The record gives the reactivity of an RNA of 207 nucleotides to 2A3.
The reactions ran in a buffer of 150 mM KOAc, 10 mM MgCl2 and 150 mM bicine (pH 8.5), at 24 C.
The data come from the RNA Mapping Database (RMDB), library M2RFPK.
Values cover nucleotides 27 to 156.

RNA sequence: GGGAACGACUCGAGUAGAGUCGAAAAUAUUUUUCAUACAGCGAAAGGCACAAGACUUCGAACAUUAUAGCAGUUAGUAGUUGCCUAAACCCAUUGCAAUAUAUGGUACAGUAGAGGUCGCAAGCCUAAAAGCUUCCGCCCUUCGGGGCGGAAGCAAGCACCAAAGUAUGUUCGCAUACUUUGGUGCAAAAGAAACAACAACAACAAC
Reactivity to 2A3 in 0.01 (KOAc 150mM, MgCl2 10mM, bicine 150mM(pH8.5), 24C), signal-to-noise 1, nucleotides 027 to 156: u080a000u010u140u010u090u080c090a110u110a170c030a060g110c070g070a200a050a000g040g010c000a030c000a000a070g000a040c010u000u000c000g060a080a080c050a080u120u130a120u200a170g020c030a010g020u040u140a070g050u120a000g030u170u070g030c000c010u020a070a010a040c040c000c040a030u000u070g000c010a020a000u020a000u030a000u150g100g010u080a010c000a000g060u050a010g000a020g020g000u010c020g040c040a010a010g000c000c000u050a090a000a000a010g000c000u000u000c000c000g000c000c010c020u050u050c090g080g000g000g000c210g000g000a000a000g000c000a000a000